RNA sequence: GGGAACGACUCGAGUAGAGUCGAAAAACACAACAUUGAUUAAUCUUAUUUUUGGUCUCCGUGGCAGGGCCCCUGUGCUUGCGCAUGCCUUGCCACACAGUGUCAUCGGGCUUACACUAUCCCCGAUCGGCUAUAACUGCUUCGGCAGUUAUAGCCGAAAAGAAACAACAACAACAAC
Reactivity to 2A3 in 0.01 (KOAc 150mM, MgCl2 10mM, bicine 150mM(pH8.5), 24C), signal-to-noise 1, nucleotides 027 to 126: a000c050a040c030a040a070c020a140u020u060g020a120u130u200a030a060u110c110u190u240a180u100u130u000u040u070g110g000u000c070u000c190c120g000u050g000g000c020a010g000g000g020c000c100c000c060u000g000u000g000c010u030u120g070c000g000c000a020u210g000c020c000u010u010g000c000c000a000c000a000c020a000g030u030g080u030c010a050u020c020g000g040g010c030u090u080a000c110a010c120u000a040u050c010c000c000c000g050a220u000